This 207-nucleotide RNA was probed chemically with DMS and 2A3. The RNA was probed in 150 mM KOAc, 10 mM MgCl2 and 150 mM bicine (pH 8.5) at 24 C. The data come from the RNA Mapping Database (RMDB), library M2RFPK. For 2A3, 1,482 sequencing reads were counted. For 2A3 the reverse transcriptase was SuperScript II with manganese. Reactivities are given for positions 27 through 156.
[RMDB]
RNA sequence: GGGAACGACUCGAGUAGAGUCGAAAAAGUGCACUAGGUACGCCUAGUGCACAUUCCAGGACAUACUGCUGAGGAUGUCAAAAAUGCAGUUGUAGUCCUCAACUGGAUAGGCUACGGCCUAUCCAGAAAAAGACUUGGUUGUUCGCAACCAAGUCAACCAAAAUCAAUUGUUCGCAAUUGAUUUUGGAAAAGAAACAACAACAACAAC
Reactivity to DMS in 0.01 (KOAc 150mM, MgCl2 10mM, bicine 150mM(pH8.5), 24C), signal-to-noise 1, nucleotides 027 to 156: a110g040u000g020c000a000c000u010a010g020g000u010a110c300g070c010c000u010a000g000u000g030c020a100c010a040u000u010c030c000a200g000g040a050c030a120u000a020c030u010g030c030u010g010a160g010g000a070u000g020u010c040a020a100a130a090a230u010g020c000a070g030u000u010g040u000a150g020u000c000c030u010c060a110a220c000u010g000g030a030u000a000g040g010c020u000a090c250g130g020c040c000u010a000u010c010c010a000g010a010a000a120a140a170g000a010c010u000u000g010g010u000u010g010u010u010c240g110c080a050a020c000c000a010a000g000u000c000a020a070
Reactivity to 2A3 in 0.01 (KOAc 150mM, MgCl2 10mM, bicine 150mM(pH8.5), 24C), signal-to-noise 2, nucleotides 027 to 156: a000g010u000g000c000a000c000u010a010g000g010u030a010c190g030c020c000u000a000g000u000g030c000a000c010a020u010u000c000c000a010g000g010a000c020a030u150a010c010u010g000c000u020g030a070g170g090a300u250g300u300c110a060a110a030a010a000u150g010c000a010g000u050u020g070u090a140g000u000c000c010u030c050a060a070c000u000g010g000a000u000a000g000g000c000u010a030c250g030g010c000c010u000a000u000c000c000a000g000a020a010a000a000a000g000a000c000u000u000g000g020u000u000g030u080u100c230g010c060a000a000c010c000a000a000g000u010c000a000a010